[RMDB]
RNA sequence: GGGAACGACUCGAGUAGAGUCGAAAAUUAUUGCUGCUCAGUGUCAGUGGAGUUACCGUGGCUUCAUUUGACGUUCGUGAUGUGUCUGUUCUUGCCCCUGAGCACCAGAGAAAUGGCGACAACAGCGCUGUCGCUAUCUCUUCGGAGAUAGCGACAGAAAAGAAACAACAACAACAAC
Reactivity to DMS in 0.01 (KOAc 150mM, MgCl2 10mM, bicine 150mM(pH8.5), 24C), signal-to-noise 2, nucleotides 027 to 126: u010u000a070u000u000g030c140u000g010c000u000c030a030g020u030g000u000c000a020g030u010g000g000a010g000u000u000a070c130c220g040u010g000g000c010u000u010c000a020u000u010u000g020a030c010g020u000u010c100g090u000g010a100u010g030u000g010u020c020u010g010u000u000c120u000u000g020c020c000c140c070u000g000a040g000c060a100c070c050a050g000a140g000a060a080a040u010g020g010c000g030a030c080a020a060c060a090g000c070g030
Reactivity to 2A3 in 0.01 (KOAc 150mM, MgCl2 10mM, bicine 150mM(pH8.5), 24C), signal-to-noise 1, nucleotides 027 to 126: u100u090a040u090u100g030c030u000g030c000u000c000a040g050u020g020u120c000a020g000u000g000g030a000g040u020u040a140c020c080g090u130g050g000c060u040u010c040a070u170u080u220g020a030c000g050u060u080c120g050u090g050a230u180g090u000g070u060c010u030g020u000u040c010u000u130g020c010c000c010c010u000g010a020g000c020a000c090c000a000g050a010g030a100a100a130u130g030g000c010g060a010c030a000a030c010a030g020c040g040
An RNA of 177 nucleotides, treated with DMS and 2A3 and read out base by base. Reactivities are given for positions 27 through 126. The DMS profile rests on 1,597 reads. Source: RMDB library OK2TST, as collected in RNAgym.